Structure probing data (DMS and 2A3) for a 177-nucleotide construct.
The reactions ran in a buffer of 150 mM KOAc, 10 mM MgCl2 and 150 mM bicine (pH 8.5), at 24 C.
RNA sequence: GGGAACGACUCGAGUAGAGUCGAAAAGAUAUGGACCUAUUUGUAAGACAGAUAAGGGUCGGAAACGACCCAUUAUCAAUGACGCAACUGUAGGUCCUAAGUCAAAAGUCUGGCGUUCGCGCCAGACCCGUGAAAAUUUGUUCGCAAAUUUUCACGGAAAAGAAACAACAACAACAAC
Reactivity to DMS in 0.01 (KOAc 150mM, MgCl2 10mM, bicine 150mM(pH8.5), 24C), signal-to-noise 1, nucleotides 027 to 126: g000a000u000a070u000g000g010a030c010c010u010a020u000u010u020g000u010a060a210g030a300c090a040g020a010u000a030a000g000g000g020u000c000g030g000a010a010a030c000g000a030c000c000c010a040u000u000a000u000c000a160a080u000g000a080c190g030c030a050a020c300u010g010u000a000g000g000u000c000c000u000a010a090g010u000c000a060a120a220a160g010u000c000u010g000g010c010g010u000u000c300g030c050g000c000c000a010g000a000c040
Reactivity to 2A3 in 0.01 (KOAc 150mM, MgCl2 10mM, bicine 150mM(pH8.5), 24C), signal-to-noise 1, nucleotides 027 to 126: g000a010u010a010u060g000g000a000c010c000u070a080u030u130u030g090u090a230a270g090a290c140a050g030a010u000a000a010g030g000g020u000c000g000g030a010a000a000c010g000a000c010c060c010a000u000u010a000u000c000a040a160u170g100a040c080g000c090a010a030c090u100g040u020a000g020g010u010c010c000u030a020a000g000u000c010a090a000a090a180g020u010c000u000g000g000c010g090u050u100c300g090c010g000c200c000a020g000a000c010